[RMDB]
RNA sequence: GGGAACGACUCGAGUAGAGUCGAAAAGGCAGCCCACCUGCCUUUGGCCCCAGGUCAGUGAGGGCGCCUCAGGUCAGCCCCCACAAGCACAGGGGGAGAUAUGAGCAGGGUCUGCCCAGAGCAGUGGUCCCCUUCAGAAGUUCGCUUCUGAAGGGGAAAAAGAAACAACAACAACAAC
Reactivity to DMS in 0.01 (KOAc 150mM, MgCl2 10mM, bicine 150mM(pH8.5), 24C), signal-to-noise 1, nucleotides 027 to 126: g000g010c010a010g000c100c050c050a220c080c000u000g000c010c000u010u000u010g010g000c000c000c000c010a070g000g010u000c050a150g000u000g010a140g000g000g020c020g020c010c000u000c170a090g020g010u010c050a250g000c000c000c000c050c000a010c070a040a080g010c130a020c050a030g010g000g010g000g010a100g000a130u010a060u000g000a090g010c020a040g000g000g000u020c010u010g020c020c030c070a100g000a090g000c070a110g000u020g000g010

The data come from the RNA Mapping Database (RMDB), library OK2TRN. The record gives the reactivity of an RNA of 177 nucleotides to DMS. The RNA was probed in 150 mM KOAc, 10 mM MgCl2 and 150 mM bicine (pH 8.5) at 24 C.